Chemical mapping of a 207-nucleotide RNA with 2A3 and DMS. The 2A3 profile rests on 2,728 reads. The reactions ran in a buffer of 150 mM KOAc, 10 mM MgCl2 and 150 mM bicine (pH 8.5), at 24 C. Values cover nucleotides 27 to 156. Source: RMDB library OK3TST, as collected in RNAgym. For DMS the reverse transcriptase was MarathonRT. For 2A3 the reverse transcriptase was SuperScript II with manganese.
RNA sequence: GGGAACGACUCGAGUAGAGUCGAAAACUGUUUAAUUUCACCAACAAGAGAGAAGUUUACUAGCUAAUUCACAAACCUAACUUUAUCUGACUCUCUUUACUUUGUGGAACCAACGUUAGUAAACCCUUACCAUUUUCAGGUAUUCCACCUUAUAGUAUCGUACGAUUUUAUUCGUAAAAUCGUACGAAAAAGAAACAACAACAACAAC
Reactivity to 2A3 in 0.01 (KOAc 150mM, MgCl2 10mM, bicine 150mM(pH8.5), 24C), signal-to-noise 5, nucleotides 027 to 156: c050u050g060u070u090u070a100a090u020u040u070c060a060c060c010a060a060c060a090a010g020a000g020a010g020a250a000g030u020u050u100a080c070u030a010g020c020u050a090a130u100u100c050a030c040a080a050a070c040c020u080a070a080c070u150u200u100a090u140c080u030g090a190c010u010c000u020c000u030u050u070a080c030u010u040u050g000u010g010g030a020a030c050c020a060a020c080g030u020u020a020g010u060a020a060a060c010c050c000u050u060a060c020c040a070u090u090u100u230c060a010g020g000u040a080u130u040c030c020a050c030c000u120u140a090u080a150g100u160a040
Reactivity to DMS in 0.01 (KOAc 150mM, MgCl2 10mM, bicine 150mM(pH8.5), 24C), signal-to-noise 2, nucleotides 027 to 156: c030u000g020u000u000u000a030a060u000u020u000c010a150c060c070a100a140c090a050a060g000a080g020a100g000a260a070g010u000u000u020a070c050u000a070g030c000u000a060a120u020u000c030a040c060a040a120a120c150c040u000a020a070c050u000u000u000a010u020c060u000g000a170c030u000c020u000c030u010u000u010a060c080u010u000u000g030u010g030g010a000a300c050c020a060a120c150g020u000u030a040g030u020a010a050a050c040c050c030u000u000a050c030c020a100u010u010u000u000c140a100g020g020u000a070u000u000c040c070a030c030c060u010u010a100u000a090g000u000a120